[RMDB]
RNA sequence: GGGAACGACUCGAGUAGAGUCGAAAACAUGGGACUUACAAAAUCUCUCAAUGCCUUGGCAGUCGGUUUGGCGUUUUUGUUCGUAGCGAUGAUGCUUUUCAUCUGACGCGACGUGAAGACCAAACGCAGCGUGAGUGAAGUUCGCUUCACUCACGCUAAAAGAAACAACAACAACAAC
Reactivity to 2A3 in 0.01 (KOAc 150mM, MgCl2 10mM, bicine 150mM(pH8.5), 24C), signal-to-noise 2, nucleotides 027 to 126: c050a100u060g000g000g010a010c030u090u050a030c130a000a260a020a020u050c060u000c000u040c020a010a170u070g020c010c000u020u040g090g000c000a000g020u070c080g040g010u060u040u020g060g000c090g000u020u000u030u070u150g130u030u010c000g000u000a060g000c000g060a010u000g020a020u030g100c060u230u110u020u130c000a000u000c020u060g070a020c000g020c000g020a000c000g000u060g020a030a010g030a010c000c000a110a000a000c050g000c120
Reactivity to DMS in 0.01 (KOAc 150mM, MgCl2 10mM, bicine 150mM(pH8.5), 24C), signal-to-noise 2, nucleotides 027 to 126: c130a100u020g000g000g000a040c100u000u000a150c210a090a130a070a050u030c000u000c040u010c060a080a100u000g020c060c010u010u010g030g020c030a030g020u030c080g000g020u000u010u000g000g000c040g000u030u010u010u000u030g020u020u020c000g000u000a070g020c290g000a050u010g010a000u000g000c280u000u000u000u000c010a000u000c010u000g050a150c150g020c000g010a050c000g060u020g070a050a040g000a060c000c040a030a050a030c010g000c170
Record summary
Source: RMDB libraries RFM100 and RFMREP, as collected in RNAgym. The record gives the reactivity of an RNA of 177 nucleotides to 2A3 and DMS. The reactions ran in a buffer of 150 mM KOAc, 10 mM MgCl2 and 150 mM bicine (pH 8.5), at 24 C. The 2A3 profile rests on 754 reads. High 2A3 reactivity points to a flexible backbone, as in loops and unpaired stretches. 2A3 adducts were read by reverse transcription with SuperScript II with manganese.